Source: RMDB library RNAMAK, as collected in RNAgym.
The record gives the reactivity of an RNA of 207 nucleotides to DMS and 2A3.
Reactivities are rounded to 0.1 and cut off at 0 and 3.
For DMS the reverse transcriptase was MarathonRT.
For 2A3, 16,900 sequencing reads were counted.
For 2A3 the reverse transcriptase was SuperScript II with manganese.
RNA sequence: GGGAACGACUCGAGUAGAGUCGAAAACGCUGGGCCAUUCCUUUCCGACGCAACAGCUAACUGAAGCGCGCACGGUUAGACAUGCGUUCGAUUCGAUGGCCUGUGCUGAAGCGCGCACGGCAACCGAAAGGUGCGGACCCCUGCAUUCGUGCAGGAAACGACUAGAGAAAUUCGUUUCUCUAGUCGUAAAAGAAACAACAACAACAAC
Reactivity to DMS in 0.01 (KOAc 150mM, MgCl2 10mM, bicine 150mM(pH8.5), 24C), signal-to-noise 3, nucleotides 027 to 156: c020g050c020u000g020g020g050c000c020a050u000u010c040c050u000u000u000c040c020g040a030c000g000c010a060a140c070a110g000c000u000a050a050c020u000g010a070a060g000c020g040c010g030c030a300c040g000g010u000u000a020g010a120c040a210u000g010c000g000u000u000c140g000a080u010u000c050g000a030u010g000g000c000c010u000g020u000g020c030u000g020a060a070g000c050g010c050g010c000a260c040g020g010c030a070a080c020c030g010a070a120a160g000g000u000g020c020g010g010a160c040c040c000c020u000g000c000a100u000u010c220g020u000g030c010a030g010g000a060a070
Reactivity to 2A3 in 0.01 (KOAc 150mM, MgCl2 10mM, bicine 150mM(pH8.5), 24C), signal-to-noise 6, nucleotides 027 to 156: c010g000c010u020g000g000g020c010c000a020u130u150c140c020u110u120u070c080c040g020a000c000g020c020a150a200c090a300g070c000u000a000a000c000u020g070a200a030g010c000g000c000g000c010a000c010g000g040u000u000a030g060a170c070a180u200g000c020g040u070u140c030g070a100u140u130c080g020a010u000g000g000c000c020u010g000u010g000c010u040g020a150a050g000c010g000c010g000c010a010c020g000g000c000a010a020c010c000g030a070a040a020g000g000u020g000c010g000g070a100c010c010c000c000u000g000c000a040u040u090c230g110u040g010c030a000g020g000a060a080